[RMDB]
RNA sequence: GGGAACGACUCGAGUAGAGUCGAAAAGAACCCAUUCGUGGGUUCGAAACGGGGUCACCCUAAGACAGGACAUGCUCUGUGGCUGAAGCCUCCACGGCCACUGAGCAACAGCUCGAGGGUGACGGAGGCACCCACCUACCCGUCCUUCGGGACGGAACGACUGAAAUCCAUUCGUGGAUUUCAGUCGAAAAGAAACAACAACAACAAC
Reactivity to 2A3 in 0.01 (KOAc 150mM, MgCl2 10mM, bicine 150mM(pH8.5), 24C), signal-to-noise 1, nucleotides 027 to 156: g020a010a000c000c000c020a020u060u060c200g090u030g020g010g000u030u010c020g020a050a020a010c090g130g020g040g020u020c020a010c000c020c000u050a280a060g030a050c120a150g260g020a070c080a150u090g000c000u000c010u030g020u020g000g000c000u010g010a060a010g000c000c000u000c000c000a020c010g010g000c000c000a010c020u020g010a000g110c010a040a010c030a020g030c010u020c010g020a000g020g000g000u000g000a000c000g000g000a000g000g000c000a010c000c010c000a020c010c020u140a170c050c000c000g020u010c020c000u010u050c270g080g000g000a040c020g000g000a010a000